[RMDB]
Structure probing data (2A3) for a 207-nucleotide construct.
Reactivities are rounded to 0.1 and cut off at 0 and 3.
Reactivities are given for positions 27 through 156.
The RNA was probed in 150 mM KOAc, 10 mM MgCl2 and 150 mM bicine (pH 8.5) at 24 C.

RNA sequence: GGGAACGACUCGAGUAGAGUCGAAAAUUCAGCGAAACACUCGACCCGCACAUGCACGAGCGUCGCGCCGAGGCUAUCCGCCGUAUCGCGCUCGGCAUGGAUUCCGACCCCGGCGUGCUCGACGGCAUGGGCACCUCGAACCAUUGGUCGGCGUGGCCGCGUGAAUAGGUUUCGACCUAUUCACGCGAAAAGAAACAACAACAACAAC
Reactivity to 2A3 in 0.01 (KOAc 150mM, MgCl2 10mM, bicine 150mM(pH8.5), 24C), signal-to-noise 2, nucleotides 027 to 156: u110u010c050a020g050c040g060a120a080a040c040a030c050u040c020g040a010c020c000c010g020c000a020c010a030u020g000c020a010c280g020a100g030c050g050u170c050g030c010g000c010c000g000a000g020g000c030u030a020u100c020c050g000c000c000g020u060a110u250c110g010c020g010c130u030c000g000g030c000a020u120g000g000a000u080u060c050c050g090a230c120c000c000c000g000g000c020g070u260g000c010u020c020g080a070c000g050g000c000a010u020g000g000g010c000a060c000c040u160c100g030a110a070c050c000a120u080u220g000g000u000c000g010g030c040g000u020g020g030c040